[RMDB]
RNA sequence: GGGAACGACUCGAGUAGAGUCGAAAACUAUUCAUAUUUCCAAUAGUUGCAAUAGGAGUAGGUGCCGGAUUCAUCUUUCAUGAAUUAGGGCAUAAGUUUGCAGCUAUGCACUAUGGAUAUUGGGCAGAUCCGAUCGCAUAUUCGUAUGCGAUCGGAUAAAAGAAACAACAACAACAAC
Reactivity to 2A3 in 0.01 (KOAc 150mM, MgCl2 10mM, bicine 150mM(pH8.5), 24C), signal-to-noise 2, nucleotides 027 to 126: c030u020a020u040u010c010a010u010a020u050u100u050c040c010a050a060u000a000g000u000u020g000c000a000a060u070a210g160g140a120g210u210a060g020g210u040g000c000c010g040g000a000u010u010c000a010u000c050u140u260u170c110a020u010g000a000a000u030u000a090g020g160g000c000a010u020a050a030g050u010u050u020g000c010a000g000c000u010a010u010g010c040a040c060u010a000u010g000g010a000u000a120u040u170g080g030g000c110a070g030
Reactivity to DMS in 0.01 (KOAc 150mM, MgCl2 10mM, bicine 150mM(pH8.5), 24C), signal-to-noise 2, nucleotides 027 to 126: c040u000a000u030u000c000a000u020a050u030u030u000c300c240a060a020u000a000g010u000u000g020c040a000a000u030a120g040g000a240g000u050a090g040g010u020g000c000c000g000g000a000u000u000c040a040u000c180u010u030u090c210a000u000g000a000a000u040u000a110g000g010g000c000a040u000a010a130g030u000u000u000g040c020a010g000c000u000a020u000g040c160a010c220u000a020u000g000g010a030u000a040u000u020g030g000g000c230a160g000